[RMDB]
This 177-nucleotide RNA was probed chemically with DMS. The reactions ran in a buffer of 150 mM KOAc, 10 mM MgCl2 and 150 mM bicine (pH 8.5), at 24 C.
RNA sequence: GGGAACGACUCGAGUAGAGUCGAAAAGAUAUGGACCGCGCAUAUUUGUCAGUCCAGCUAGCUGCUUUCGGAAACGAAAGAACUACAGCAAACUGGACUUGGAUUUAAUAUGCGCGGUCCUAAGUCACACAAAAUACGAGUUCGCUCGUAUUUUGUGAAAAGAAACAACAACAACAAC
Reactivity to DMS in 0.01 (KOAc 150mM, MgCl2 10mM, bicine 150mM(pH8.5), 24C), signal-to-noise 1, nucleotides 027 to 126: g030a080u010a300u000g010g020a030c000c000g040c000g040c000a010u000a000u010u000u000g020u010c020a030g020u000c000c010a010g030c030u000a300g010c000u000g000c010u000u010u000c000g000g000a140a090a300c000g000a000a020a000g000a060a040c110u010a300c000a000g020c000a000a120a180c000u000g000g010a010c000u000u020g020g000a030u010u010u010a000a000u000a000u000g010c000g020c010g010g010u000c000c000u000a000a030g000u000c030a300
The DMS profile rests on 1,430 reads. The data come from the RNA Mapping Database (RMDB), library TTRINS.